[RMDB]
RNA sequence: GGGAACGACUCGAGUAGAGUCGAAAAGAAGAGAAUAAAUAGAGGAGUCAGGGUUCGCACACGCUCCGCGAACCUACGGUAACACUGACUGUGGAGCGGAAAAGGCAGAUACUGCACUGCCAAAGAACAUCCGAUUACCUUUCGAGGUAAUCGGAUGAAAAGAAACAACAACAACAAC
Reactivity to DMS in 0.01 (KOAc 150mM, MgCl2 10mM, bicine 150mM(pH8.5), 24C), signal-to-noise 3, nucleotides 027 to 126: g000a080a080g000a110g010a090a040u010a030a070a070u070a060g000a120g000g000a060g000u000c080a060g000g010g020u000u000c000g010c000a060c140a140c050g000c010u010c010c020g020c000g000a000a010c010c010u030a020c160g000g000u000a110a050c120a210c220u050g000a030c110u020g000u000g000g010a030g070c010g000g000a130a080a080a080g000g010c000a000g010a090u000a020c080u040g010c110a210c010u000g040c000c000a030a050a120g020a060a180
Reactivity to 2A3 in 0.01 (KOAc 150mM, MgCl2 10mM, bicine 150mM(pH8.5), 24C), signal-to-noise 5, nucleotides 027 to 126: g090a040a020g110a010g090a110a090u200a130a100a040u200a090g110a060g150g010a000g010u010c020a020g040g010g000u010u000c010g000c010a010c010a010c120g010c010u000c000c000g000c000g000a020a020c000c000u010a030c070g040g040u060a070a000c060a030c120u050g050a020c020u080g080u130g130g000a000g000c000g020g030a050a120a000a010g000g000c000a000g010a050u110a190c060u130g060c070a030c030u010g000c010c010a020a060a000g080a020a030
Conditions: 150 mM KOAc, 10 mM MgCl2 and 150 mM bicine (pH 8.5), 24 C. Structure probing data (DMS and 2A3) for a 177-nucleotide construct. Source: RMDB library OK1LIB, as collected in RNAgym.